[RMDB]
RNA sequence: GGGAACGACUCGAGUAGAGUCGAAAAACAUAACACCCAUGCGGGUCUACGGGCCUGUGUGCAGUGGUGUGGAUGGGUAGGGGAGCGUCGUGCAGCCAUGGAAGCGCCGGAGUGAUCCAGGUGUGGAACAGAUACUCGCAUUCGUGCGAGUAUCUGUAAAAGAAACAACAACAACAAC
Reactivity to DMS in 0.01 (KOAc 150mM, MgCl2 10mM, bicine 150mM(pH8.5), 24C), signal-to-noise 2, nucleotides 027 to 126: a090c040a090u010a050a090c060a030c010c200c010a050u000g010c000g000g030g060u000c010u000a100c120g020g000g000c000c000u000g030u000g000u020g030c290a120g020u020g000g000u000g020u000g000g010a140u010g000g000g000u000a100g010g000g000g020a060g010c040g030u000c030g020u010g000c090a040g010c040c000a080u010g000g000a160a150g020c070g020c010c020g050g010a060g010u060g000a150u010c020c000a100g000g010u000g010u010g000g000a150
Reactivity to 2A3 in 0.01 (KOAc 150mM, MgCl2 10mM, bicine 150mM(pH8.5), 24C), signal-to-noise 2, nucleotides 027 to 126: a000c050a010u100a090a000c020a030c000c010c000a000u020g000c000g000g030g000u050c040u130a180c220g050g000g000c010c000u030g010u010g010u010g020c130a070g110u050g020g040u040g020u060g010g030a100u070g030g010g060u070a030g000g010g000g020a010g040c000g060u030c010g030u050g060c030a000g010c020c000a040u060g090g020a090a010g000c020g000c010c000g050g000a040g010u090g020a060u010c010c010a060g000g010u010g050u010g040g010a000
This 177-nucleotide RNA was probed chemically with DMS and 2A3. Values cover nucleotides 27 to 126. It was measured as part of the RMDB library RFM100. The 2A3 profile rests on 1,245 reads.